Chemical mapping of a 177-nucleotide RNA with DMS and 2A3. Reactivities are given for positions 27 through 126. The RNA was probed in 150 mM KOAc, 10 mM MgCl2 and 150 mM bicine (pH 8.5) at 24 C. Values are in units of 0.01, from 0 to 300, in steps of 10. 2A3 is a SHAPE reagent: it acylates the 2'-hydroxyl of flexible nucleotides of all four kinds. For DMS, 3,618 sequencing reads were counted. The 2A3 profile rests on 2,717 reads. DMS adducts were read by reverse transcription with MarathonRT. Source: RMDB library OK1LIB, as collected in RNAgym.
[RMDB]
RNA sequence: GGGAACGACUCGAGUAGAGUCGAAAAGCACGUCGUUACGACGACGUGCAAGAAAACAAAAGGAGUGGCGAUGCCUGGCCACAGUGAAUCAAACAGGCAAAAAGCAUGGUGGUACGCCACCAUGCAAUAAUUAAUGGCCGUUCGCGGCCAUUAAUUAAAAAGAAACAACAACAACAAC
Reactivity to DMS in 0.01 (KOAc 150mM, MgCl2 10mM, bicine 150mM(pH8.5), 24C), signal-to-noise 2, nucleotides 027 to 126: g000c000a030c010g000u000c000g030u000u050a170c140g040a020c000g010a010c000g040u040g000c010a010a080g020a130a090a140a110c230a100a060a070a120g010g020a160g000u000g000g010c000g000a080u020g000c000c010u010g000g030c000c020a000c000a120g010u040g010a120a040u020c170a010a030a030c000a000g000g030c000a060a070a040a130a080g000c010a000u000g010g030u000g000g000u000a020c220g000c030c000a010c000c000a000u010g010c000a000a000
Reactivity to 2A3 in 0.01 (KOAc 150mM, MgCl2 10mM, bicine 150mM(pH8.5), 24C), signal-to-noise 3, nucleotides 027 to 126: g010c010a000c010g000u000c000g000u000u040a080c260g020a000c000g000a000c020g070u000g000c010a020a000g020a000a090a000a020c270a040a060a040a040g280g080a280g010u000g010g030c040g040a030u040g000c000c000u010g010g000c000c030a000c010a010g070u120g110a020a100u170c060a040a000a070c010a010g000g000c000a010a020a020a020a020g000c000a000u000g000g000u000g010g000u030a060c250g100c020c000a000c010c000a000u000g020c000a000a000